[RMDB]
An RNA of 177 nucleotides, treated with 2A3 and DMS and read out base by base. The data come from the RNA Mapping Database (RMDB), library OK2TRN. For DMS the reverse transcriptase was MarathonRT. The DMS profile rests on 1,600 reads. The RNA was probed in 150 mM KOAc, 10 mM MgCl2 and 150 mM bicine (pH 8.5) at 24 C.

RNA sequence: GGGAACGACUCGAGUAGAGUCGAAAACGGAUCUAGGUACGUACGCGCCGGCCUGUGCAGUACGUACUGAUCGUAGUACAUGCGCCGAGCGCGAUCCAUCGUACGCUGAUCGUACGACGGCCUGAUCAAUCGCCUGACAGUUCGCUGUCAGGCGAUUAAAAGAAACAACAACAACAAC
Reactivity to 2A3 in 0.01 (KOAc 150mM, MgCl2 10mM, bicine 150mM(pH8.5), 24C), signal-to-noise 1, nucleotides 027 to 126: c040g090g000a000u000c100u180a050g040g000u070a130c000g030u030a000c000g010c000g000c010c020g030g030c010c060u000g010u000g000c000a070g130u040a010c020g010u060a070c030u070g010a020u000c010g030u020a020g060u020a000c030a010u080g000c000g000c110c010g080a090g060c020g000c020g020a020u050c060c000a050u010c010g010u010a010c030g000c110u140g050a110u220c000g010u050a000c000g020a000c000g000g020c000c010u000g000a000u020c050
Reactivity to DMS in 0.01 (KOAc 150mM, MgCl2 10mM, bicine 150mM(pH8.5), 24C), signal-to-noise 2, nucleotides 027 to 126: c210g000g000a000u000c000u000a010g020g010u000a060c110g010u030a140c020g050c020g000c010c010g010g000c020c040u020g010u000g000c000a100g010u000a010c010g000u000a300c220u000g000a080u000c040g010u000a030g000u000a040c000a060u010g000c300g010c020c000g000a100g040c010g000c010g010a030u000c070c080a150u000c000g000u000a010c000g010c230u000g000a110u000c000g000u050a010c020g020a030c000g020g000c030c000u010g000a030u010c030